Structure probing data (2A3) for a 207-nucleotide construct. The reactions ran in a buffer of 150 mM KOAc, 10 mM MgCl2 and 150 mM bicine (pH 8.5), at 24 C. The data come from the RNA Mapping Database (RMDB), library RNAMAK. Values are in units of 0.01, from 0 to 300, in steps of 10.
RNA sequence: GGGAACGACUCGAGUAGAGUCGAAAAGGGGUCAGAAUCAUCGAUCGACAAGGAGGCGAAGAACUACUGAAGCCUCCACGGUAGGGAGCCUCUGUCGGGAGAUUCUGACGGAGGCACCCAAAACUCCAUUCCAGUCCUUCGGGACUGGAAUGGAGAAACUUUCACAGUGAUUCGUCACUGUGAAAGUAAAAGAAACAACAACAACAAC
Reactivity to 2A3 in 0.01 (KOAc 150mM, MgCl2 10mM, bicine 150mM(pH8.5), 24C), signal-to-noise 2, nucleotides 027 to 156: g000g010g020g020u060c050a070g070a090a130u090c050a010u080c040g110a070u070c050g020a060c080a110a140g040g000a000g010g020c060g060a160a010g060a130a130c130u290a040c040u220g020a150a000g020c010c030u010c010c020a030c000g000g000u130a070g030g000g000a030g000c000c000u010c020u020g000u010c020g000g010g010a210g010a170u300u120c000u090g000a000c010g000g020a000g000g020c000a000c010c000c000a040a050a000a020c000u030c000c000a000u000u030c010c000a030g000u000c000c000u020u120c300g120g000g010a000c000u010g000g000a000a000u000g000g010a010g010a020a010